RNA sequence: GGGAACGACUCGAGUAGAGUCGAAAAGGGGUCUCCGGCAAGUGAGUACAGGACAUGUCCUGAAGCCUCCACGGGACAACAGCCUGUACCUGAAUCUUGCGGGAGACGGAGGCACCCAAAACAUGUAAGGUGAGCUUUCGAGCUCACCUUACAUGAACGUAUUGAGAAGUUUCGACUUCUCAAUACGAAAAGAAACAACAACAACAAC
Reactivity to DMS in 0.01 (KOAc 150mM, MgCl2 10mM, bicine 150mM(pH8.5), 24C), signal-to-noise 1, nucleotides 027 to 156: g020g000g020g090u000c000u000c010c020g060g020c040a020a070g040u000g030a040g070u000a040c010a020g010g000a080c050a220u000g030u020c000c000u000g010a060a140g020c000c000u010c010c020a300c000g000g010g040a040c010a080a150c070a100g000c000c010u020g000u000a020c020c020u010g000a140a060u000c040u000u000g000c020g000g000g000a040g000a000c010g000g020a010g030g080c020a250c010c000c000a070a080a120a230c020a010u010g020u010a040a010g020g000u000g010a020g020c020u000u000u010c240g010a060g020c000u000c010a000c000c000u000u000a000c000a020u010g000a090a170
Reactivity to 2A3 in 0.01 (KOAc 150mM, MgCl2 10mM, bicine 150mM(pH8.5), 24C), signal-to-noise 2, nucleotides 027 to 156: g110g000g000g000u000c010u030c000c030g100g000c010a000a020g020u190g140a090g010u020a020c000a000g000g070a050c040a150u140g010u010c010c000u010g020a070a010g010c000c010u000c000c000a010c000g000g000g020a000c010a030a020c030a060g240c000c000u010g000u000a000c000c000u210g080a040a110u010c000u000u020g000c130g040g020g000a000g000a000c000g010g000a010g000g000c000a040c010c000c010a030a070a010a030c000a000u010g000u000a000a000g000g000u000g010a020g000c000u050u090u290c300g010a010g000c000u010c000a000c000c010u000u000a000c000a000u000g000a000a000